[RMDB]
Chemical mapping of a 177-nucleotide RNA with 2A3.

RNA sequence: GGGAACGACUCGAGUAGAGUCGAAAAGAUCUGGCGACAUUAUUCAGAAGCUGUUCCCUCAGUAAAUGCGCUGUUUUCCAUCAGGAAAUACAGGCUACCGAAACAUGCGUCUCUAUGCAGGCGACAAGAGCAAUAUUCACUUCGGUGAAUAUUGCUCAAAAGAAACAACAACAACAAC
Reactivity to 2A3 in 0.01 (KOAc 150mM, MgCl2 10mM, bicine 150mM(pH8.5), 24C), signal-to-noise 1, nucleotides 027 to 126: g140a200u160c070u110g040g080c030g020a010c050a050u010u000a020u040u070c000a050g090a130a010g070c000u000g010u000u000c000c000c000u010c040a030g100u070a020a060a190u090g020c190g000c040u000g000u020u000u000u010c070c050a190u180c140a210g020g080a000a030a000u100a020c050a000g020g000c000u000a000c030c000g120a110a070a040c090a030u090g050c020g000u000c000u000c000u070a240u250g020c090a010g000g000c000g110a150c040a110a010